Structure probing data (DMS and 2A3) for a 207-nucleotide construct. The 2A3 profile rests on 1,366 reads. The reactions ran in a buffer of 150 mM KOAc, 10 mM MgCl2 and 150 mM bicine (pH 8.5), at 24 C. Source: RMDB library OK3TST, as collected in RNAgym.
[RMDB]
RNA sequence: GGGAACGACUCGAGUAGAGUCGAAAAGUGUGGUGAGGGCUGAGACUACAUAGAGAUAGGGACCCAGCUGAGGCCAGUCUUCCAAAGAUACACACCAAAGCCGUAGAUAUGUCUUGUGGAGCAGAAGAAUCACUCAGCUGAGAACCUGCCCAAAUUCACCAGUAUGACAGUUCGCUGUCAUACUGGUAAAAGAAACAACAACAACAAC
Reactivity to DMS in 0.01 (KOAc 150mM, MgCl2 10mM, bicine 150mM(pH8.5), 24C), signal-to-noise 2, nucleotides 027 to 156: g050u000g030u010g000g030u000g010a090g030g030g050c030u000g040a220g030a110c040u020a070c070a180u000a150g030a220g010a200u000a040g020g020g010a300c070c000c030a030g020c010u030g000a090g010g000c110c050a160g030u010c070u010u010c010c010a100a080a140g030a090u000a040c040a070c030a100c040c030a050a150a170g050c070c060g020u000a120g010a300u010a030u010g010u000c050u020u000g010u000g020g010a050g000c100a070g010a060a060g000a070a180u000c060a120c010u010c030a060g020c020u000g000a060g000a040a250c040c000u000g000c000c020c010a010a170a160u000u030c030
Reactivity to 2A3 in 0.01 (KOAc 150mM, MgCl2 10mM, bicine 150mM(pH8.5), 24C), signal-to-noise 3, nucleotides 027 to 156: g020u030g010u020g010g000u090g080a100g000g030g030c020u030g010a000g010a080c030u080a030c040a060u160a030g050a020g030a080u160a130g010g030g020a010c000c010c000a010g010c020u000g000a020g040g070c060c050a070g040u010c000u060u030c010c040a080a070a010g010a030u070a050c060a010c030a010c130c040a100a110a030g080c090c030g040u060a060g050a180u140a080u240g060u010c040u060u170g040u060g070g010a040g060c080a020g020a140a000g030a070a040u100c010a020c070u000c010a000g010c000u000g010a010g020a050a020c000c000u040g000c010c000c010a020a040a040u150u100c040